RNA sequence: GGGAACGACUCGAGUAGAGUCGAAAAGACACACGACGAGAUGCGGUUCGUGAUGGGCCACGAGCUCGGCCACGCACUGUCCGGCCACGCGGUGUACCGCACGAUGAUGAUGCAUCUGCUGCGGUUGAGAGACGAGAGAGUUCGCUCUCUCGUCUCUAAAAGAAACAACAACAACAAC
Reactivity to 2A3 in 0.01 (KOAc 150mM, MgCl2 10mM, bicine 150mM(pH8.5), 24C), signal-to-noise 2, nucleotides 027 to 126: g080a020c000a010c000a000c100g130a030c040g020a030g000a070u100g090c050g080g000u020u030c010g020u030g040a210u120g010g040g020c070c020a060c090g040a040g000c020u030c060g030g030c040c010a040c010g040c010a070c110u090g020u100c040c080g010g030c030c020a030c040g030c010g000g000u030g020u040a030c010c000g010c020a020c000g000a010u070g030a020u090g000a050u150g020c000a010u010c030u060g000c040u030g030c040g020g080u050u130g080
Reactivity to DMS in 0.01 (KOAc 150mM, MgCl2 10mM, bicine 150mM(pH8.5), 24C), signal-to-noise 3, nucleotides 027 to 126: g010a130c060a050c040a100c060g000a100c050g000a100g000a040u000g020c030g010g010u000u000c000g020u000g010a080u000g010g000g000c020c000a030c100g000a150g010c030u000c090g010g010c070c010a040c130g000c140a100c120u000g000u000c040c020g020g010c040c040a100c110g000c000g000g020u010g020u000a060c020c000g000c000a010c010g000a030u000g000a170u010g010a150u010g030c010a000u010c010u030g030c110u000g020c030g000g000u000u010g020